[RMDB]
RNA sequence: GGGAACGACUCGAGUAGAGUCGAAAAGAUUUUAGUGUUUGAACCUUAUGGUGCUGAUUCUGCUGUUACAUGGUUCAUGUUUGAGUGGAAUGGGUCAUAGACCGUGUGGUGAUUCUCGAUCGGCUCAGGACGAAGAUGCGUUCGCGUAUCUUCGUCCAAAAGAAACAACAACAACAAC
Reactivity to 2A3 in 0.01 (KOAc 150mM, MgCl2 10mM, bicine 150mM(pH8.5), 24C), signal-to-noise 2, nucleotides 027 to 126: g040a010u020u040u060u100a020g000u010g050u020u010u030g020a010a010c000c000u010u010a040u050g010g010u020g000c000u030g010a020u020u030c010u010g000c000u000g070u300u040a000c000a040u050g030g200u130u130c020a000u000g090u000u020u010g090a010g000u000g000g030a000a010u020g000g030g020u080c010a050u030a020g010a040c020c020g000u010g000u000g030g060u000g020a040u080u050c000u000c020g050a030u000c000g000g000c010u000c000a020
Reactivity to DMS in 0.01 (KOAc 150mM, MgCl2 10mM, bicine 150mM(pH8.5), 24C), signal-to-noise 3, nucleotides 027 to 126: g000a010u010u000u010u000a010g000u000g000u000u000u000g000a010a000c000c000u010u000a010u000g000g030u010g000c020u020g010a050u010u010c030u020g010c020u000g000u010u000a040c030a050u020g010g030u020u030c020a030u010g000u020u000u000g010a040g040u010g000g010a050a060u000g000g000g000u000c110a070u010a060g010a080c010c020g000u010g020u010g010g050u000g010a170u000u000c000u000c030g000a080u040c010g000g000c010u010c050a110
The data come from the RNA Mapping Database (RMDB), library OK1LIB. An RNA of 177 nucleotides, treated with 2A3 and DMS and read out base by base. The DMS profile rests on 7,994 reads. For DMS the reverse transcriptase was MarathonRT. Values are in units of 0.01, from 0 to 300, in steps of 10. For 2A3, 3,260 sequencing reads were counted.